[RMDB]
RNA sequence: GGGAACGACUCGAGUAGAGUCGAAAACGCGACGUUCCGGAAAGAACUGUUCGAAGGCAGUGAGGUUAACGAUGACAUCAUCGGCCUCGACAGUACCGAAGUCAGGGUUGAUCGUUGCAGACAAUAAUGCUGGGAAUAAUUUCGAUUAUUCCCAGCAAAAAGAAACAACAACAACAAC
Reactivity to DMS in 0.01 (KOAc 150mM, MgCl2 10mM, bicine 150mM(pH8.5), 24C), signal-to-noise 4, nucleotides 027 to 126: c140g020c050g010a030c030g000u000u000c050c030g000g030a090a100a090g010a110a040c000u000g010u010u020c010g040a110a060g020g020c010a180g000u000g000a020g000g020u000u000a060a120c290g000a200u010g020a040c080a060u000c000a020u000c070g010g000c010c000u000c010g000a020c010a020g000u010a070c040c040g000a110a100g010u000c060a150g000g000g020u000u000g000a080u000c030g010u000u000g010c040a120g000a140c180a040a090u000a060a120
Structure probing data (DMS) for a 177-nucleotide construct. The reactions ran in a buffer of 150 mM KOAc, 10 mM MgCl2 and 150 mM bicine (pH 8.5), at 24 C. The DMS profile rests on 3,047 reads. For DMS the reverse transcriptase was MarathonRT.